[RMDB]
RNA sequence: GGGAACGACUCGAGUAGAGUCGAAAAAAUUCUGUUUGAUAAGUUAGUUUGUGCUGGUUUUGAGAGAACUAAGGAGAGAAUCAGAGAUCACAUUAUAGUUCAUUGUGUUGCUGGUGCUGGCAAAUCAACCCUCAUUAGGGAGAUCGUAACUGAGUUCCUCCUAGAGUUGAUUCGUCAACUCUAGGAGAAAAGAAACAACAACAACAAC
Reactivity to 2A3 in 0.01 (KOAc 150mM, MgCl2 10mM, bicine 150mM(pH8.5), 24C), signal-to-noise 1, nucleotides 027 to 156: a000a000u250u140c100u170g030u050u080u030g100a070u040a090a000g040u040u110a000g030u000u080u160g030u050g010c010u030g010g080u000u020u180u110g050a050g000a010g030a070a010c060u080a070a000g010g000a020g010a000g040a020a030u050c010a020g010a010g000a080u040c030a010c010a070u060u060a040u110a200g040u040u090c000a020u070u060g010u000g000u060u100g010c020u000g000g090u030g030c030u020g020g010c000a010a040a040u000c010a020a100c000c010c030u000c020a110u100u270a030g000g080g000a000g000a000u060c040g020u020a010a030c010u070g000a000g050u070u030c010
Reactivity to DMS in 0.01 (KOAc 150mM, MgCl2 10mM, bicine 150mM(pH8.5), 24C), signal-to-noise 1, nucleotides 027 to 156: a050a060u040u000c040u000g020u000u000u000g060a180u000a040a180g000u010u000a100g000u000u000u010g000u000g000c000u000g010g010u000u030u000u020g000a080g020a170g010a060a090c060u010a050a110g000g010a100g000a090g020a060a080u000c060a110g000a090g020a150u000c030a080c060a090u000u000a140u010a040g000u000u000c040a120u010u000g000u070g000u000u000g040c010u050g010g030u000g020c020u020g010g070c060a030a040a060u000c060a040a150c020c000c020u010c120a100u010u000a100g020g060g010a220g000a030u010c060g030u000a060a090c110u000g020a100g020u000u000c010